[RMDB]
RNA sequence: GGGAACGACUCGAGUAGAGUCGAAAACUGCAAAGUCACUUUUGCGCAGGGGAGGUCAUUAAGGCGGGAAGCCGACUUUGAUAAUCUGUGUGAACCAUUUUAUCACAAUCUUAUUUAUUAAGAAUGCGAAGCAGAGUUUUUUCGAAAACUCUGCUUCAAAAGAAACAACAACAACAAC
Reactivity to 2A3 in 0.01 (KOAc 150mM, MgCl2 10mM, bicine 150mM(pH8.5), 24C), signal-to-noise 6, nucleotides 027 to 126: c030u050g010c050a060a030a030g040u090c030a050c090u010u040u030u120g020c040g030c030a030g010g020g020g020a070g010g050u030c020a060u080u180a070a030g040g030c030g050g030g050a080a020g000c020c020g010a030c030u100u080u050g020a040u040a070a070u030c020u020g040u000g030u030g120a040a040c030c010a100u040u040u040u120a060u080c010a030c040a130a060u020c010u030u040a090u190u170u030a200u110u030a050a040g030a090a050u110g050c060
Reactivity to DMS in 0.01 (KOAc 150mM, MgCl2 10mM, bicine 150mM(pH8.5), 24C), signal-to-noise 3, nucleotides 027 to 126: c050u010g020c050a060a020a030g000u000c090a130c070u020u010u000u000g020c060g010c070a090g000g000g000g010a090g010g010u000c080a050u030u020a060a070g000g000c050g020g000g000a080a070g000c020c040g000a040c090u010u010u010g000a010u010a050a020u000c040u000g020u000g000u030g020a110a140c150c030a050u020u020u010u020a040u020c010a100c130a080a090u000c010u000u010a000u000u020u000a080u040u000a020a030g000a040a080u020g010c280

The record gives the reactivity of an RNA of 177 nucleotides to 2A3 and DMS. The data come from the RNA Mapping Database (RMDB), libraries RFM100 and RFMREP. The reactions ran in a buffer of 150 mM KOAc, 10 mM MgCl2 and 150 mM bicine (pH 8.5), at 24 C. High 2A3 reactivity points to a flexible backbone, as in loops and unpaired stretches.